Structure probing data (DMS and 2A3) for a 177-nucleotide construct. For 2A3 the reverse transcriptase was SuperScript II with manganese. Source: RMDB library TTRDEL, as collected in RNAgym. The reactions ran in a buffer of 150 mM KOAc, 10 mM MgCl2 and 150 mM bicine (pH 8.5), at 24 C.
RNA sequence: GGGAACGACUCGAGUAGAGUCGAAAAGAUAUGGAUUUGGCUUUUGACGAAGUCACCGUCGGAAACGACGGAAGUCUUCGAUAAGCCAUAUCCUAAGUCAAAACGUAAUUCCUUCGGGAAUUACGAAGUGUUAAAUGAUCUUCGGAUCAUUUAACACAAAAGAAACAACAACAACAAC
Reactivity to DMS in 0.01 (KOAc 150mM, MgCl2 10mM, bicine 150mM(pH8.5), 24C), signal-to-noise 5, nucleotides 027 to 126: g000a020u000a300u000g010g000a000u000u000u000g010g010c000u000u000u000u010g030a190c150g020a020a010g010u000c050a150c000c000g000u000c000g010g000a100a100a170c000g010a000c010g020g010a030a030g020u000c000u000u000c000g000a080u000a020a020g000c000c000a000u000a010u000c010c000u010a030a120g000u010c030a090a060a120a190c010g000u000a010a010u000u000c000c000u000u020c220g010g000g000a010a010u000u000a010c000g000a010a030
Reactivity to 2A3 in 0.01 (KOAc 150mM, MgCl2 10mM, bicine 150mM(pH8.5), 24C), signal-to-noise 5, nucleotides 027 to 126: g030a020u070a050u130g010g010a000u040u020u010g010g000c030u050u070u100u220g200a180c060g010a010a000g010u010c020a010c100c000g000u000c010g040g000a110a050a050c010g000a000c000g010g020a010a020g010u010c000u000u010c010g070a060u020a040a010g000c000c000a000u000a000u000c000c000u010a130a000g050u020c020a010a030a060a120c010g000u000a010a010u000u020c010c000u010u060c230g140g000g000a010a000u000u000a000c010g010a150a030